[RMDB]
RNA sequence: GGGAACGACUCGAGUAGAGUCGAAAAGUGUUAGCGUUCGCGCUAACACAAAGAACGCUGCAACGCGCAGCGCGCUGGCGAGAGCACGAAAGAGCGUUAUAAAAAGCUCGGGCUUCGGCCCGAGCAACCUUCUGAAUUAGUUCGCUAAUUCAGAAGGAAAAGAAACAACAACAACAAC
Reactivity to DMS in 0.01 (KOAc 150mM, MgCl2 10mM, bicine 150mM(pH8.5), 24C), signal-to-noise 2, nucleotides 027 to 126: g000u010g000u000u000a000g020c010g010u000u020c230g000c010g050c000u000a010a000c010a000c010a040a070a060g000a060a100c020g010c000u000g010c040a100a080c170g020c100g000c020a050g020c020g020c130g000c060u000g020g010c040g000a120g020a130g010c010a060c050g010a060a130a130g010a060g000c030g000u000u000a070u010a050a100a110a180a130g010c000u000c010g000g010g020c000u000u010c150g040g000c000c000c000g000a020g010c010a000a020
Reactivity to 2A3 in 0.01 (KOAc 150mM, MgCl2 10mM, bicine 150mM(pH8.5), 24C), signal-to-noise 2, nucleotides 027 to 126: g000u000g000u000u000a010g000c000g000u030u040c260g000c010g010c080u010a010a010c010a010c000a000a020a010g020a070a010c000g000c010u050g010c020a180a170c200g040c010g000c130a010g010c010g000c020g000c070u090g030g000c040g040a100g010a030g090c020a020c110g060a080a040a020g040a010g010c010g010u050u060a160u120a190a180a040a040a020g010c020u000c000g030g030g000c040u080u070c280g130g000c030c000c000g010a000g000c000a000a010
The record gives the reactivity of an RNA of 177 nucleotides to DMS and 2A3. The RNA was probed in 150 mM KOAc, 10 mM MgCl2 and 150 mM bicine (pH 8.5) at 24 C. Source: RMDB library M2PK50, as collected in RNAgym. For DMS, 1,648 sequencing reads were counted.